[RMDB]
RNA sequence: GGGAACGACUCGAGUAGAGUCGAAAAGUUCGCGUGGCGGCGGCGUUUGGCACUCUAUUUGUUUCCUUGUUCUACCUCAUUGCUCAAAUGGCUGGUGCGGGUUCGCUGGUGUCGGUGCUGCUCGAUCUCACCGUACGACUUUCGAGUCGUACGGUGAAAAAGAAACAACAACAACAAC
Reactivity to DMS in 0.01 (KOAc 150mM, MgCl2 10mM, bicine 150mM(pH8.5), 24C), signal-to-noise 1, nucleotides 027 to 126: g010u010u010c040g030c000g020u010g020g040c070g000g000c000g010g010c040g010u000u000u010g000g010c110a070c040u010c080u010a060u000u010u010g010u010u000u010c060c040u000u000g020u000u010c090u010a140c040c020u000c050a070u010u000g020c070u000c080a080a040a090u000g000g020c080u000g020g020u000g030c100g000g030g000u010u000c030g030c050u000g000g030u000g000u000c040g000g030u010g000c030u000g020c060u000c040g010a080u000c070